[RMDB]
RNA sequence: GGGAACGACUCGAGUAGAGUCGAAAACGAAAUGCGUUGAAACGCCAAGCGCUACCGUCACCCCCAGAGCAAAAACGUUGGGGAGAAAAAGCGGAACAAUGCGUGGGUUGUGGCGCUGAAACCACAAGUCAAGUACAGUCUUCGGACUGUACUUGACAAAAGAAACAACAACAACAAC
Reactivity to DMS in 0.01 (KOAc 150mM, MgCl2 10mM, bicine 150mM(pH8.5), 24C), signal-to-noise 2, nucleotides 027 to 126: c030g000a090a100a020u030g030c020g020u000u000g060a110a090a060c090g060c030c080a080a070g000c010g000c010u030a030c040c000g000u010c090a240c040c000c000c000c010a000g000a050g000c230a040a010a040a220a040c180g040u000u000g070g060g000g030a020g070a040a020a020a100a140g000c010g000g000a120a060c180a050a050u050g000c010g040u000g010g050g040u000u000g000u020g060g010c070g010c000u000g000a120a040a210c020c020a150c060a090a150
Reactivity to 2A3 in 0.01 (KOAc 150mM, MgCl2 10mM, bicine 150mM(pH8.5), 24C), signal-to-noise 3, nucleotides 027 to 126: c090g040a050a100a020u230g000c020g000u020u050g080a030a010a020c020g000c000c000a140a030g020c000g000c010u030a040c000c000g020u060c020a030c000c000c010c040c000a020g010a000g090c090a160a080a120a010a100c070g040u070u010g000g030g020g030a100g090a060a110a000a000a020g010c000g020g060a000a070c030a030a100u200g010c000g000u040g000g160g000u060u190g100u010g000g000c020g020c000u010g050a040a010a000c010c000a030c010a070a040